[RMDB]
RNA sequence: GGGAACGACUCGAGUAGAGUCGAAAACGGGGUUGGCUAUAGUUGAUUUCGAACCGUAUGCUUAUGUAUAUGGAAUGAUUUGUACGCUUUACGCAUGUGUACACUCACUCUCAGUUCACUCUUGUGAGAGAAGGGAGAGAGAGAUAUUUUGCGAUUAGGUAUCUUUUUUCUUCGGAAGGGGGAUAUCAAAAGAAACAACAACAACAAC
Reactivity to 2A3 in 0.01 (KOAc 150mM, MgCl2 10mM, bicine 150mM(pH8.5), 24C), signal-to-noise 5, nucleotides 027 to 156: c030g010g000g020g000u040u060g040g000c040u050a010u050a150g030u030u050g050a190u060u070u050c050g030a070a020c010c000g010u000a000u010g000c040u250u110a100u300g010u000a010u010a000u040g040g030a090a070u070g060a080u050u070u090g000u000a010c010g000c010u060u120u080a030c040g000c020a020u040g010u000g000u020a000c010a010c010u000c000a020c000u000c000u000c020a150g060u080u030c020a030c030u030c030u130u270g050u170g100a020g000a010g010a040a040g080g020g000a000g000a000g000a000g000a000g000a010u020a060u130u200u110u100g020c020g030a060u030u050a040
Reactivity to DMS in 0.01 (KOAc 150mM, MgCl2 10mM, bicine 150mM(pH8.5), 24C), signal-to-noise 3, nucleotides 027 to 156: c060g030g000g040g020u000u010g000g000c050u000a090u000a110g010u000u000g010a120u000u000u010c020g000a080a300c030c000g020u000a020u000g000c030u010u000a110u010g030u000a040u000a030u000g010g000a080a120u010g020a090u000u000u000g010u000a060c090g020c050u000u000u010a140c080g000c050a050u000g010u000g020u000a030c040a130c120u000c010a160c020u010c020u000c010a090g020u000u000c030a110c020u000c020u000u010g030u000g010a080g010a070g020a070a110g000g010g000a040g020a040g010a070g020a090g010a090u000a030u000u000u010u010g020c030g020a160u000u000a070